[RMDB]
Structure probing data (2A3 and DMS) for a 177-nucleotide construct.
The reactions ran in a buffer of 150 mM KOAc, 10 mM MgCl2 and 150 mM bicine (pH 8.5), at 24 C.
RNA sequence: GGGAACGACUCGAGUAGAGUCGAAAACACAGUCAAUAACCCACGAUGUCAAAGAACAAAAGUGUUGGAUCCACUUUUGACAGGUUACCAUGUGCCACAUCGACCCGUGACACUCUGUUCAUCAGAGGUUUACAUGCUGAUUCGUCAGCAUGUAAACAAAAGAAACAACAACAACAAC
Reactivity to 2A3 in 0.01 (KOAc 150mM, MgCl2 10mM, bicine 150mM(pH8.5), 24C), signal-to-noise 9, nucleotides 027 to 126: c070a000c020a000g060u080c050a040a120u060a110a110c010c010c020a010c040g040a030u070g040u090c080a110a060a090g070a160a130c010a020a020a020a000g020u020g020u090u130g080g020a020u040c020c000a000c000u020u010u020u020g040a050c030a030g040g010u040u060a070c030c020a060u130g030u090g060c010c010a020c000a030u040c010g030a070c000c010c020g060u070g020a010c020a010c040u000c000u000g050u160u170c050a170u090c000a070g020a000g010
Reactivity to DMS in 0.01 (KOAc 150mM, MgCl2 10mM, bicine 150mM(pH8.5), 24C), signal-to-noise 5, nucleotides 027 to 126: c070a110c120a090g000u010c050a070a110u030a100a090c020c010c030a120c070g000a080u010g000u020c080a050a060a100g020a100a160c080a040a030a010a020g010u000g010u000u040g020g000a120u030c160c000a020c000u000u000u000u000g000a070c060a030g010g000u020u010a070c060c040a040u000g020u000g000c010c040a050c030a050u020c050g000a050c030c010c030g000u020g000a080c160a180c010u000c000u000g010u020u040c120a060u030c010a000g000a080g010